[RMDB]
RNA sequence: GGGAACGACUCGAGUAGAGUCGAAAAGCAGGGUCCGCGUUCCAUCCUUUCUUACCUGAUGGCCGGCAUGGUCCCAGCCUCCUCGCUGGCGCCGGCUGGGCAACAUUCCGAGGGGACCGUCCCCUCGCUGUAAAGCUAUCUUCGGAUAGCUUUACAGAAAAGAAACAACAACAACAAC
Reactivity to DMS in 0.01 (KOAc 150mM, MgCl2 10mM, bicine 150mM(pH8.5), 24C), signal-to-noise 3, nucleotides 027 to 126: g010c210a070g010g020g000u000c020c050g020c020g000u000u000c030c020a090u000c040c060u000u000u010c050u000u010a140c080c060u000g020a120u010g000g020c060c010g000g020c040a090u000g000g010u010c300c000c000a060g000c010c090u000c090c090u000c140g000c020u000g010g000c230g050c010c010g010g030c010u000g010g030g000c010a050a070c090a110u000u000c130c020g010a030g000g020g010g010a190c190c230g010u000c000c000c000c000u000c020g010
Reactivity to 2A3 in 0.01 (KOAc 150mM, MgCl2 10mM, bicine 150mM(pH8.5), 24C), signal-to-noise 2, nucleotides 027 to 126: g020c050a030g070g000g020u000c010c020g070c070g060u070u060c020c010a070u060c020c000u060u180u120c040u090u100a170c040c050u080g080a110u100g060g090c000c000g020g010c060a140u130g040g000u030c020c010c010a010g000c000c010u140c020c030u070c040g010c030u010g000g000c030g040c010c000g020g020c020u050g000g000g010c030a070a040c020a140u120u150c040c000g010a010g000g020g010g010a060c060c070g200u150c000c030c010c000u010c020g000
Overview: Chemical mapping of a 177-nucleotide RNA with DMS and 2A3. The 2A3 profile rests on 1,916 reads. Source: RMDB library VIROID, as collected in RNAgym. For 2A3 the reverse transcriptase was SuperScript II with manganese.